[RMDB]
RNA sequence: GGGAACGACUCGAGUAGAGUCGAAAAAGCACCGUCCUUACGAGGACGGUGCAAGUGGUACUAUACCUCAGUUUUAUCAGGUGUUCUUUAAAAUCACCUGGAAAUACUGAGGUUGUGUUUCACUGAAGGAAGAUACCUAGUUCGCUAGGUAUCUUCCAAAAGAAACAACAACAACAAC
Reactivity to DMS in 0.01 (KOAc 150mM, MgCl2 10mM, bicine 150mM(pH8.5), 24C), signal-to-noise 2, nucleotides 027 to 126: a070g010c010a010c000c000g000u000c000c030u000u000a110c220g030a020g000g010a010c000g010g000u000g000c020a000a010g010u000g000g030u020a000c020u020a080u010a000c000c000u000c000a010g000u000u010u000u000a070u010c000a000g000g000u000g020u000u010c160u010u020u040a120a120a100a040u010c000a000c000c010u010g000g000a020a020a020u020a000c000u010g010a000g000g010u000u000g000u010g000u000u000u000c000a010c000u000g020a200a160
Reactivity to 2A3 in 0.01 (KOAc 150mM, MgCl2 10mM, bicine 150mM(pH8.5), 24C), signal-to-noise 3, nucleotides 027 to 126: a000g010c000a000c000c000g000u050c020c000u100u040a080c290g150a070g000g000a000c000g020g000u020g010c000a000a000g010u000g020g020u010a000c020u050a030u010a030c000c000u010c000a000g000u000u010u060u000a240u100c000a010g030g000u020g060u110u090c150u090u300u230a090a160a060a060u100c000a000c000c000u000g010g020a000a020a010u190a010c010u000g010a000g120g000u000u000g010u010g000u000u010u040c000a010c020u070g040a090a040